[RMDB]
RNA sequence: GGGAACGACUCGAGUAGAGUCGAAAAGAGUGUAGCCAGCUGUGGGUUUUUCUUGGGGCCCAGAGAGACAUGGGCAGAGAUGGCCGCCCCGCUCCCCCGGCCCCCACCACACACACUGAGACCUUUCUAUUCACUUCGGAUUCGUCCGAAGUGAAUAAAAAGAAACAACAACAACAAC
Reactivity to DMS in 0.01 (KOAc 150mM, MgCl2 10mM, bicine 150mM(pH8.5), 24C), signal-to-noise 3, nucleotides 027 to 126: g020a030g010u010g020u010a140g000c040c040a050g020c140u030g000u020g000g000g010u000u010u010u000u030c170u000u020g000g030g000g020c000c010c030a090g000a140g010a090g020a080c140a080u020g010g020g040c010a160g000a130g020a070u010g020g010c090c100g040c040c000c000c300g090c020u010c000c030c000c130c300g000g000c030c000c000c000c190a020c020c010a010c060a080c030a050c030a040c080u030g020a130g000a140c240c000u000u030u020c030
Reactivity to 2A3 in 0.01 (KOAc 150mM, MgCl2 10mM, bicine 150mM(pH8.5), 24C), signal-to-noise 3, nucleotides 027 to 126: g090a020g030u060g020u070a050g070c040c030a040g000c110u000g000u020g030g030g040u060u060u040u100u070c070u090u160g020g000g050g040c020c010c010a020g020a000g000a010g020a070c100a170u150g000g000g000c040a010g000a000g020a100u120g090g030c060c020g000c000c000c000c000g010c010u020c000c020c020c010c000g000g000c000c020c050c000c000a060c020c000a000c010a020c010a000c000a000c030u040g010a040g020a130c020c000u010u060u000c020